[RMDB]
RNA sequence: GGGAACGACUCGAGUAGAGUCGAAAAUGUAUCAUAGUCUACUAUGAUACAGACUCAUGUGGCGACACAUGAGAAUAUAAACCUAUGUAGACUGGUCAUAGGUCAUAACUGUAGUCAUUGCAACAGCAUUGGAGGCAGUAAUGCAAGAGCCAGAAGAAGUACACAUAGCGUUCGCGCUAUGUGUACUAAAAGAAACAACAACAACAAC
Reactivity to 2A3 in 0.01 (KOAc 150mM, MgCl2 10mM, bicine 150mM(pH8.5), 24C), signal-to-noise 3, nucleotides 027 to 156: u010g000u000a000u010c010a010u010a030g100u110c080u190a260c000u000a140u000g000a000u000a000c000a010g000a010c000u000c000a000u010g000u000g000g000c000g020a010c010a000c000a000u000g000a000g000a000a000u140a010u040a020a070a010c010c000u020a030u070g020u030a020g060a160c020u010g010g010u020c030a040u020a070g070g000u050c010a040u100a180a010c020u020g020u050a020g130u040c000a030u000u020g000c070a170a130c080a260g020c000a000u000u060g020g000a030g160g000c000a000g010u060a090a020u020g000c050a060a050g030a030g150c010c010a010g000a050a010g080a040
Reactivity to DMS in 0.01 (KOAc 150mM, MgCl2 10mM, bicine 150mM(pH8.5), 24C), signal-to-noise 1, nucleotides 027 to 156: u010g000u000a010u010c020a070u000a020g010u010c060u000a010c000u000a000u000g010a030u000a010c000a000g020a180c050u000c000a000u020g030u010g000g020c300g000a300c020a050c050a010u000g010a000g020a060a030u000a160u000a100a140a120c070c030u000a020u020g080u000a100g010a150c010u000g010g000u000c000a040u000a060g010g000u000c040a020u020a110a070c010u000g040u000a090g000u000c090a100u000u000g010c030a130a140c250a130g020c020a060u000u010g010g000a070g010g000c050a050g010u000a080a080u000g010c070a170a020g000a180g010c000c020a050g020a090a120g000a140